Chemical mapping of a 207-nucleotide RNA with 2A3 and DMS. For DMS, 4,663 sequencing reads were counted.
RNA sequence: GGGAACGACUCGAGUAGAGUCGAAAAGCAACGCAAAGCCGCGGCAAGUGGAGUUAGCGAGAAGAGACUAGGCUUUGGUUUCUUCAAGAGAAGCGGUCACCAAUCAGGUGUGGUAGUUACCGUAAAAAUAACCGCUCUUUGUUCGCAAAGAGCGGAAGACUAUAGUGUACUUCGGUACACUAUAGUCAAAAGAAACAACAACAACAAC
Reactivity to 2A3 in 0.01 (KOAc 150mM, MgCl2 10mM, bicine 150mM(pH8.5), 24C), signal-to-noise 5, nucleotides 027 to 156: g010c020a020a050c040g000c070a070a040a020g020c010c010g030c030g070g010c070a080a050g040u050g070g060a120g030u130u180a050g050c060g040a050g010a090a010g020a000g010a010c020u040a050g060g090c040u100u090u080g020g010u010u010u020c000u020u030c040a070a010g040a000g020a170a010g020c000g010g010u040c020a020c020c020a030a090u180c040a060g080g070u070g030u050g090g020u060a070g030u070u070a020c020c020g020u070a100a030a010a000a030u120a080a080c000c000g000c000u000c000u000u000u010g020u030u050c070g000c130a000a000a000g010a000g010c000g000g000a000a010
Reactivity to DMS in 0.01 (KOAc 150mM, MgCl2 10mM, bicine 150mM(pH8.5), 24C), signal-to-noise 2, nucleotides 027 to 156: g030c040a080a060c050g000c040a080a120a170g030c020c040g000c030g020g060c040a080a080g010u010g020g010a140g000u000u000a110g000c060g040a180g000a040a050g000a070g030a030c020u000a070g030g000c110u000u000u000g040g010u000u000u000c010u000u000c020a100a210g000a070g000a080a200g030c000g010g010u010c040a190c020c000a100a130u010c070a080g010g000u000g010u000g010g020u010a090g010u010u000a040c030c010g000u010a000a060a070a100a110u010a090a180c000c020g000c000u010c000u000u010u000g000u000u010c250g040c010a020a010a010g010a010g020c010g010g010a000a030
The 2A3 profile rests on 4,902 reads. 2A3 adducts were read by reverse transcription with SuperScript II with manganese. Conditions: 150 mM KOAc, 10 mM MgCl2 and 150 mM bicine (pH 8.5), 24 C.